Chemical mapping of a 177-nucleotide RNA with 2A3. High 2A3 reactivity points to a flexible backbone, as in loops and unpaired stretches. The RNA was probed in 150 mM KOAc, 10 mM MgCl2 and 150 mM bicine (pH 8.5) at 24 C. For 2A3, 333 sequencing reads were counted. It was measured as part of the RMDB library OK1LIB.
[RMDB]
RNA sequence: GGGAACGACUCGAGUAGAGUCGAAAACAACGGCGAUGAUCGCGGGCGCCAGCGUCAGAGACGCCAACAUCACCGUGACCAAACCGAUCGCGCAUGGCGAUGCGAGGGUAUUGAAGUAGGGUAGCCGCGGGAUCUCACACUUCGGUGUGAGAUCCCGAAAAGAAACAACAACAACAAC
Reactivity to 2A3 in 0.01 (KOAc 150mM, MgCl2 10mM, bicine 150mM(pH8.5), 24C), signal-to-noise 1, nucleotides 027 to 126: c180a000a000c000g070g000c070g110a070u030g040a000u000c000g000c000g150g010g040c000g000c000c000a000g100c070g000u000c070a120g100a030g000a120c040g030c000c090a000a000c000a130u000c040a000c000c000g040u040g050a040c000c120a070a040a000c010c010g200a170u020c110g030c000g090c200a070u010g270g010c000g200a040u110g000c000g000a100g070g000g000u040a020u050u270g000a110a000g120u090a000g000g000g100u060a000g000c000c000g040